[RMDB]
RNA sequence: GGGAACGACUCGAGUAGAGUCGAAAACGGUUACGCCUUCUUUACCGUUAUCAAGGAAGGUACUCGGCCAUGCUAAGGGAAGCAUUAAUCCUUAGGCGCAUGUCGCCGCCAGCAUGGUGUGAGGGGAAAAAGUAUGCUGGGUUCGCCCAGCAUACAAUCAUCAGAACCAGUUCGCUGGUUCUGAUGAAAAAGAAACAACAACAACAAC
Reactivity to 2A3 in 0.01 (KOAc 150mM, MgCl2 10mM, bicine 150mM(pH8.5), 24C), signal-to-noise 5, nucleotides 027 to 156: c010g000g020u010u040a030c070g000c000c000u000u000c000u020u040u030a010c010c010g280u120u120a050u080c080a010a000g020g010a000a000g010g010u050a050c010u010c010g040g010c020c000a000u010g010c000u050a050a050g040g000g000a020a030g030c090a120u140u220a080a100u080c000c000u040u110a070g010g000c000g000c040a140u220g090u300c030g010c040c000g000c040c030a000g000c000a000u020g010g030u090g110u140g040a040g080g030g020g040a000a240a000a020a000g000u000a000u000g000c000u010g000g030g030u040u040c100g070c030c000c000a000g000c000a000u000a000c000a000a010
Reactivity to DMS in 0.01 (KOAc 150mM, MgCl2 10mM, bicine 150mM(pH8.5), 24C), signal-to-noise 2, nucleotides 027 to 156: c030g010g010u020u000a040c020g030c010c010u000u000c010u000u000u000a020c000c000g020u010u000a060u000c120a040a040g000g120a040a020g020g030u000a060c020u000c000g010g010c000c000a030u000g010c010u000a110a190g000g010g000a130a150g060c120a140u010u020a090a130u010c020c010u000u000a100g010g050c050g000c020a130u000g020u010c030g010c030c000g020c100c110a030g020c000a010u000g010g030u000g000u010g000a090g000g020g030g000a040a050a060a130a100g010u000a010u000g010c020u000g010g010g020u000u010c300g000c010c010c010a000g000c010a000u010a000c000a070a100